[RMDB]
RNA sequence: GGGAACGACUCGAGUAGAGUCGAAAAGAAACUGAAUGCAUCGAGUGUGGCGGCAUUGAACGGUAUGCCGAUCAAGAAGAUAUCGCCGGUGAUCUCCGGGAAUCUGAAGCCAUGAACGGUGAACGUGACCCAUGGUUGGGUUCGCCCAACCAUGGGUAAAAGAAACAACAACAACAAC
Reactivity to 2A3 in 0.01 (KOAc 150mM, MgCl2 10mM, bicine 150mM(pH8.5), 24C), signal-to-noise 2, nucleotides 027 to 126: g030a000a110a000c080u130g080a120a110u170g050c020a020u010c000g000a010g020u140g010u000g020g030c040g020g000c030a050u110u060g030a100a030c090g050g000u210a050u050g140c000c040g000a030u070c020a010a000g030a000a000g000a020u060a060u090c180g140c040c050g070g020u070g120a180u180c150u010c050c000g010g000g000a020a030u000c000u000g020a030a000g020c000c050a060u000g090a020a010c010g000g000u000g030a020a020c000g020u050g150
Reactivity to DMS in 0.01 (KOAc 150mM, MgCl2 10mM, bicine 150mM(pH8.5), 24C), signal-to-noise 2, nucleotides 027 to 126: g020a110a140a110c130u000g000a060a090u040g040c000a010u000c000g010a040g060u060g000u000g000g040c020g030g010c170a150u010u000g000a070a130c050g000g000u070a080u080g040c000c000g000a080u000c180a030a040g000a170a000g000a030u000a030u000c020g000c000c000g000g000u040g030a130u080c160u000c000c000g000g000g000a030a000u000c000u000g000a160a110g000c010c000a000u030g000a080a080c040g020g000u000g000a040a150c180g000u000g000
The record gives the reactivity of an RNA of 177 nucleotides to 2A3 and DMS. DMS adducts were read by reverse transcription with MarathonRT. The RNA was probed in 150 mM KOAc, 10 mM MgCl2 and 150 mM bicine (pH 8.5) at 24 C. Reactivities are given for positions 27 through 126. For 2A3 the reverse transcriptase was SuperScript II with manganese.